[RMDB]
RNA sequence: GGGAACGACUCGAGUAGAGUCGAAAACUAUAGCCUUGGGGUUCUUGAUCCAUCUGAUUCUCUCCUAUGUGCCAGAUUGCUUUGAAUUUACUGUCUCUUGGUCUAACAACAAGCAAGCUAGAGGUGACAUGUUAGGUUGGUUCGCCAACCUAACAUGAAAAGAAACAACAACAACAAC
Reactivity to DMS in 0.01 (KOAc 150mM, MgCl2 10mM, bicine 150mM(pH8.5), 24C), signal-to-noise 3, nucleotides 027 to 126: c070u010a100u010a120g020c030c050u000u000g000g010g020g020u000u000c050u000u000g010a080u000c050c040a070u010c060u000g000a110u000u000c050u000c020u000c020c060u000a090u010g000u000g010c020c020a060g000a080u000u000g010c060u000u000u010g010a110a070u000u010u000a080c070u000g010u010c050u010c050u000u000g010g010u000c050u010a040a050c120a050a070c160a050a050g000c080a030a050g000c020u000a070g000a300g020g000u000g000a140
Reactivity to 2A3 in 0.01 (KOAc 150mM, MgCl2 10mM, bicine 150mM(pH8.5), 24C), signal-to-noise 2, nucleotides 027 to 126: c000u020a010u140a210g070c010c030u030u050g060g000g000g030u140u030c020u060u090g010a040u000c010c010a030u030c040u050g060a130u090u000c020u020c000u040c040c000u040a050u120g060u030g050c010c010a020g040a070u020u050g040c000u060u030u100g060a090a080u170u120u050a060c020u020g060u060c020u010c000u060u110g060g000u010c030u040a060a020c050a030a000c000a040a040g030c010a020a030g000c040u040a010g000a040g100g040u000g020a050